Description:
This 177-nucleotide RNA was probed chemically with 2A3 and DMS. For DMS the reverse transcriptase was MarathonRT. Conditions: 150 mM KOAc, 10 mM MgCl2 and 150 mM bicine (pH 8.5), 24 C. The 2A3 profile rests on 12,278 reads. It was measured as part of the RMDB library OK2TRN.
RNA sequence: GGGAACGACUCGAGUAGAGUCGAAAAUGCGUCGGCGCAUCCCUACCGGCCUGGGCGCCGAGCCCGGGGAAACGUUGAUGCUGUUGGGCGACACCCGCGACGAGUUCGACGGUUCCGUGUGGGCGCAUCCAUUUUACAAAUUCGUUUGUAAAAUGGAAAAAGAAACAACAACAACAAC
Reactivity to 2A3 in 0.01 (KOAc 150mM, MgCl2 10mM, bicine 150mM(pH8.5), 24C), signal-to-noise 4, nucleotides 027 to 126: u100g010c030g010u010c000g020g010c020g010c020a050u060c000c000c000u010a020c000c000g040g030c000c040u260g010g000g060c040g000c020c010g000a020g010c000c020c000g090g000g000g000a020a020a000c020g000u020u010g030a050u090g020c040u060g030u130u150g030g020g020c080g070a060c060a140c060c030c010g080c020g050a050c030g060a040g060u050u030c010g030a020c000g030g000u040u010c020c020g040u110g060u130g070g020g010c010g000c000a000
Reactivity to DMS in 0.01 (KOAc 150mM, MgCl2 10mM, bicine 150mM(pH8.5), 24C), signal-to-noise 7, nucleotides 027 to 126: u000g010c120g010u000c020g000g010c010g020c040a140u000c000c010c010u000a180c060c020g010g010c030c010u010g000g010g010c020g010c040c040g010a050g010c010c010c020g010g000g010g010a020a050a040c020g010u000u000g010a030u010g020c020u010g020u000u000g020g010g030c060g010a170c210a300c060c040c020g010c050g000a050c040g010a110g010u000u000c020g010a020c030g000g000u000u000c020c010g010u000g010u000g010g010g020c010g000c030a170